The record gives the reactivity of an RNA of 177 nucleotides to 2A3 and DMS.
Conditions: 150 mM KOAc, 10 mM MgCl2 and 150 mM bicine (pH 8.5), 24 C.
[RMDB]
RNA sequence: GGGAACGACUCGAGUAGAGUCGAAAAUGAGGACGUUCGCCAGGCCGUGUUGGAGACCGCCCGUUGAUCCGAGGGCGGAGGCGAGGAUGCCCGAACUCAAAGCCGCCGUGCUCAUGCCGCCGGUGGCUGUUCGUCUCAAGUUCGCUUGAGACGAACAAAAAGAAACAACAACAACAAC
Reactivity to 2A3 in 0.01 (KOAc 150mM, MgCl2 10mM, bicine 150mM(pH8.5), 24C), signal-to-noise 4, nucleotides 027 to 126: u120g010a040g030g020a010c030g050u020u020c030g010c010c030a050g080g000c010c010g080u060g150u080u220g040g010a110g040a050c000c020g010c000c000c000g010u030u160g100a130u050c040c040g080a100g000g000g000c000g000g000a020g000g020c010g000a040g040g010a050u160g020c000c000c000g030a060a040c030u040c130a120a090a010g010c000c000g030c050c010g110u290g030c020u030c040a110u220g090c040c020g000c000c000g020g000u010g000g010c000
Reactivity to DMS in 0.01 (KOAc 150mM, MgCl2 10mM, bicine 150mM(pH8.5), 24C), signal-to-noise 4, nucleotides 027 to 126: u020g000a100g030g010a160c060g010u020u020c030g030c010c010a160g000g010c020c040g030u030g020u010u040g000g000a130g000a140c020c000g010c010c010c000g000u010u020g000a070u020c040c070g020a160g010g010g010c020g020g010a020g000g000c030g000a080g010g000a090u010g000c000c030c000g030a090a110c050u010c030a090a100a100g000c000c000g010c000c010g000u040g040c010u010c080a150u040g010c100c140g020c010c000g000g030u000g000g000c020